RNA sequence: GGGAACGACUCGAGUAGAGUCGAAAACUGGGUCAUGGACCCAUCAGAAUGGUUUUGGCGAUACUAGCCUUUUUGAGAUUUACAGCAAUCAAGCCAUCACUGGGCCUUAUCAACAGAUGGGGUUCCGCCCAGGGCCGGUAUUCGUACCGGCCCUGGGAAAAGAAACAACAACAACAAC
Reactivity to 2A3 in 0.01 (KOAc 150mM, MgCl2 10mM, bicine 150mM(pH8.5), 24C), signal-to-noise 2, nucleotides 027 to 126: c050u040g000g000g010u220c200a300u130g150g130a040c030c040c000a000u050c010a040g180a150a030u030g000g170u020u050u050u230g010g000c030g040a020u110a170c070u170a050g000c000c000u020u110u000u040u240g160a160g000a030u160u160u130a250c130a060g050c060a010a030u110c000a020a020g030c000c000a030u050c000a070c180u150g000g000g040c020c000u000u090a050u020c000a030a230c000a090g000a030u040g000g000g000g050u140u140c000c000g000